[RMDB]
RNA sequence: GGGAACGACUCGAGUAGAGUCGAAAAAGUCAAUGAUAAGAUCUUCACCAAGAGUGGCGUUAAUGACAUUUGUAUGUUUGAGAAUAAAACCACUUUGCCUACUAAUAUAGCUUUUGAACUCUAUGCUCACGAAGGCCGUUCGCGGCCUUCAAAAGAAACAACAACAACAAC
Reactivity to 2A3 in 0.01 (KOAc 150mM, MgCl2 10mM, bicine 150mM(pH8.5), 24C), signal-to-noise 2, nucleotides 027 to 129: a000g050u050c040a000a050u040g100a090u040a000a040g040a020u000c030u130u000c040a030c100c000a050a000g070a000g030u000g010g010c040g100u070u200a010a050u180g010a020c060a060u040u110u180g100u130a090u090g080u010u040u090g080a050g020a000a120u090a000a010a010a000c030c000a000c000u030u040u040g000c010c010u090a000c000u110a140a140u080a000u050a080g000c000u000u010u000u110g000a000a000c000u000c030u060a100u130g000c000u000c000a000c060
Reactivity to DMS in 0.01 (KOAc 150mM, MgCl2 10mM, bicine 150mM(pH8.5), 24C), signal-to-noise 3, nucleotides 027 to 129: a140g020u020c030a060a080u110g000a040u000a050a080g030a100u010c080u040u000c040a080c050c000a090a060g040a020g020u010g030g060c190g010u050u060a080a160u050g010a040c090a000u000u070u010g000u030a040u010g000u010u000u100g000a090g000a030a080u040a040a020a030a040c030c030a040c050u020u030u000g020c040c000u020a090c150u000a060a040u020a030u020a070g000c090u060u020u000u000g000a010a010c070u000c040u040a050u040g020c010u030c040a080c100